[RMDB]
RNA sequence: GGGAACGACUCGAGUAGAGUCGAAAACGGUGCGGAUCAAAGAACACCGGCAACUGCUUCCGAUUUGUCAGCAGCUGCAGCCGAGUUCAGCGGCCUGGUGUUCACCGCCGCCAUCGCAGAUGGCAGGGCACUAUAGCGUAUUCGUACGCUAUAGUGCAAAAGAAACAACAACAACAAC
Reactivity to 2A3 in 0.01 (KOAc 150mM, MgCl2 10mM, bicine 150mM(pH8.5), 24C), signal-to-noise 9, nucleotides 027 to 126: c060g050g040u190g020c010g000g020a080u130c160a090a060a100g010a010a000c000a010c000c000g000g000c000a020a010c000u010g010c010u130u110c140c040g280a300u080u100u300g140u120c030a000g000c010a000g000c010u020g000c010a010g000c000c000g030a060g090u220u230c080a050g070c010g000g000c000c010u050g000g000u000g000u000u000c010a020c020c000g000c010c020g000c000c000a010u020c060g120c300a070g010a020u010g010g000c030a030g070g070
Reactivity to DMS in 0.01 (KOAc 150mM, MgCl2 10mM, bicine 150mM(pH8.5), 24C), signal-to-noise 6, nucleotides 027 to 126: c100g010g010u030g010c020g040g000a150u020c170a070a100a100g010a020a020c000a010c000c000g020g000c000a010a030c010u010g010c000u000u030c100c060g010a200u010u040u040g010u020c120a030g010c000a010g000c050u000g010c030a270g010c000c000g000a110g000u020u020c160a160g010c070g000g000c000c130u000g010g010u000g000u000u000c000a080c010c010g010c010c060g000c000c000a010u010c020g000c170a080g010a050u000g000g010c000a110g030g010
Record summary
The data come from the RNA Mapping Database (RMDB), libraries RFM100 and RFMREP. An RNA of 177 nucleotides, treated with 2A3 and DMS and read out base by base. As a SHAPE reagent, 2A3 marks flexible, mostly unpaired nucleotides at the ribose 2'-OH. Conditions: 150 mM KOAc, 10 mM MgCl2 and 150 mM bicine (pH 8.5), 24 C.